[RMDB]
RNA sequence: GGGAACGACUCGAGUAGAGUCGAAAAUUAAUGAGCGAUCAAUUAAACAAAUACGAAAUAGCAGAAAUAAUCAAUAUCAGGACAUAUCAAAUUAGUAAAGACGGUAUUGCUUUUUGCAAUAUCGACGGUCUAGAUAACGCUGUAGAUAUCGCAAAGCAACUCAAGUCUCGUUCGCGAGACUUGAGUUAAAAGAAACAACAACAACAAC
Reactivity to 2A3 in 0.01 (KOAc 150mM, MgCl2 10mM, bicine 150mM(pH8.5), 24C), signal-to-noise 2, nucleotides 027 to 156: u080u050a010a020u030g020a000g020c060g000a050u150c110a070a060u040u060a020a080a020c020a000a040a020u270a120c070g050a070a000a050u060a040g000c000a020g050a100a020a050u270a120a000u050c050a020a020u050a020u130c030a000g060g010a020c010a040u130a000u140c060a090a000a270u200u020a020g080u120a070a040a070g050a000c020g060g000u020a010u040u040g000c030u050u170u100u300u300g030c000a000a020u000a000u000c000g000a030c000g020g000u000c020u000a030g020a040u000a080a060c050g000c030u080g020u060a010g040a070u070a000u040c030g030c010a010a020a020g040c010

Conditions: 150 mM KOAc, 10 mM MgCl2 and 150 mM bicine (pH 8.5), 24 C. This 207-nucleotide RNA was probed chemically with 2A3. Reactivities are given for positions 27 through 156. Source: RMDB library OK3TST, as collected in RNAgym.